RNA sequence: GGGAACGACUCGAGUAGAGUCGAAAAUGAAAACGUUUUACAAUAAUAUCGUUCUUAAAUUUCCUUGAAACGGAAAAGAAUUGCCAAGUUCGCUUGGAAGGAGAUUAUUCUUUUUUGUUUCAACGAAGACUAGGCGCUGAUUCGUCAGCGCCUAGUCAAAAGAAACAACAACAACAAC
Reactivity to 2A3 in 0.01 (KOAc 150mM, MgCl2 10mM, bicine 150mM(pH8.5), 24C), signal-to-noise 1, nucleotides 027 to 126: u030g000a000a000a030a000c130g000u090u070u240u230a170c180a070a060u300a220a000u060a000u300c000g000u060u000c010u000u010a040a060a100u000u000u000c000c000u000u000g030a000a000a000c000g020g000a000a000a000a000g000a000a000u040u030g040c020c000a000a000g020u000u000c070g010c040u000u000g000g030a010a030g300g300a130g040a130u000u010a000u040u000c000u010u000u000u000u000u000g000u000u000u000c000a000a000c000g110a010a000